RNA sequence: GGGAACGACUCGAGUAGAGUCGAAAAUGUGUUUGAAUAAUGAUAUUCACUUAACCUAUUUGUAAAAACUCUCAGUAGUGUACUUGAGUUAGUACAUCGCGUGACCUGGCUCCUUUUCUUUGCUGUUAUUUACUGAUAAAAAUAAAUCUCCUGCGCACUAAAUCCACGAUUUCGAUCGUGGAUUUAGAAAAGAAACAACAACAACAAC
Reactivity to 2A3 in 0.01 (KOAc 150mM, MgCl2 10mM, bicine 150mM(pH8.5), 24C), signal-to-noise 1, nucleotides 027 to 156: u190g010u000g000u010u070u090g030a040a030u160a080a080u120g040a030u070a030u160u000c000a020c030u040u000a030a010c000c010u120a210u140u190u150g140u110a020a000a020a110a070c030u020c040u010c020a070g050u110a000g030u090g050u070a040c040u080u130g080a050g140u070u000a030g000u020a000c010a070u000c080g000c000g070u020g030a040c000c000u000g020g010c000u000c030c000u080u080u020u060c030u100u060u070g030c040u040g040u070u060a120u050u090u030a030c050u080g030a030u110a080a020a000a020a060u070a020a120a020u110c040u060c110c000u100g030c150g050c040a010